[RMDB]
RNA sequence: GGGAACGACUCGAGUAGAGUCGAAAACGCAGAGGGUUCUGAUAACAAAGAACCUAGAUAGCGGCAUCGGUAUUAUAGGAUGUAGUCGGUGAGCCGGAAUGCCUGCAUCGUAAGCCUAUAAGUAAAUUUAAGUGUAAUCACUUCGGUGAUUACACAACUUUCUAGUCACGUUCGCGUGACUAGAAAGAAAAGAAACAACAACAACAAC
Reactivity to DMS in 0.01 (KOAc 150mM, MgCl2 10mM, bicine 150mM(pH8.5), 24C), signal-to-noise 2, nucleotides 027 to 156: c010g040c060a110g020a300g000g000g000u000u000c000u030g030a160u070a170a150c300a100a290a000g000a030a010c010c010u000a030g020a300u000a170g040c000g020g000c080a080u000c070g020g010u030a140u000u000a070u000a070g000g030a030u010g000u000a060g050u000c040g050g030u000g010a020g010c020c010g030g000a070a200u000g000c030c030u030g040c010a020u020c050g000u010a050a100g010c020c020u000a020u000a020a060g010u010a040a130a120u000u000u000a110a270g020u020g000u000a010a010u010c000a010c000u000u010c300g040g030u000g000a020u000u000a000c000a010c000a030a040
Reactivity to 2A3 in 0.01 (KOAc 150mM, MgCl2 10mM, bicine 150mM(pH8.5), 24C), signal-to-noise 4, nucleotides 027 to 156: c030g010c030a010g070a090g120g000g000u000u000c010u030g090a140u080a250a040c020a030a100a010g000a000a000c000c000u010a010g010a050u110a030g000c020g020g010c000a030u060c040g070g010u090a060u180u040a050u100a050g060g000a030u050g070u150a040g080u100c040g000g010u070g030a040g050c050c030g040g080a110a010u120g060c000c020u020g020c010a010u010c020g050u050a050a020g020c000c010u080a070u030a120a020g080u090a090a050a180u130u230u130a170a020g000u000g000u010a000a000u010c000a010c020u030u030c170g070g010u000g000a000u000u010a000c000a000c000a000a000
The record gives the reactivity of an RNA of 207 nucleotides to DMS and 2A3.
The 2A3 profile rests on 2,057 reads.
For 2A3 the reverse transcriptase was SuperScript II with manganese.
Source: RMDB library M2RFPK, as collected in RNAgym.
The reactions ran in a buffer of 150 mM KOAc, 10 mM MgCl2 and 150 mM bicine (pH 8.5), at 24 C.